Record summary:
Structure probing data (2A3) for a 207-nucleotide construct. Source: RMDB library OK3TST, as collected in RNAgym. The RNA was probed in 150 mM KOAc, 10 mM MgCl2 and 150 mM bicine (pH 8.5) at 24 C. For 2A3 the reverse transcriptase was SuperScript II with manganese.
RNA sequence: GGGAACGACUCGAGUAGAGUCGAAAAGCAAUGUGUCUCGGAGCAAGAACAUCUGGUGCAAAUUAUACAUGGAUUCAUUCUGCUUACACAAAUAACUCGAGUGUUACAGCUCCACUCGCACUUCAGCCUAUAGGUGGUUACGUCGGCAUCGGGACGACGCGGCAAGCAUGUUCGCAUGCUUGCCGCGAAAAGAAACAACAACAACAAC
Reactivity to 2A3 in 0.01 (KOAc 150mM, MgCl2 10mM, bicine 150mM(pH8.5), 24C), signal-to-noise 1, nucleotides 027 to 156: g000c010a000a090u100g060u030g040u040c020u080c030g080g000a060g010c020a070a080g010a090a000c020a030u070c050u110g130g030u040g040c050a020a030a300u300u160a230u090a050c080a050u030g020g000a000u030u140c080a030u100u060c110u050g020c000u020u140a080c050a000c010a050a000a130u210a060a010c020u000c030g010a010g040u060g010u030u090a050c000a090g070c000u100c010c020a010c000u010c060g000c050a040c050u060u090c060a060g050c000c000u060a060u260a080g020g000u100g040g000u010u080a080c040g030u030c020g000g000c010a090u090c080g000g020g030a010c000g030a020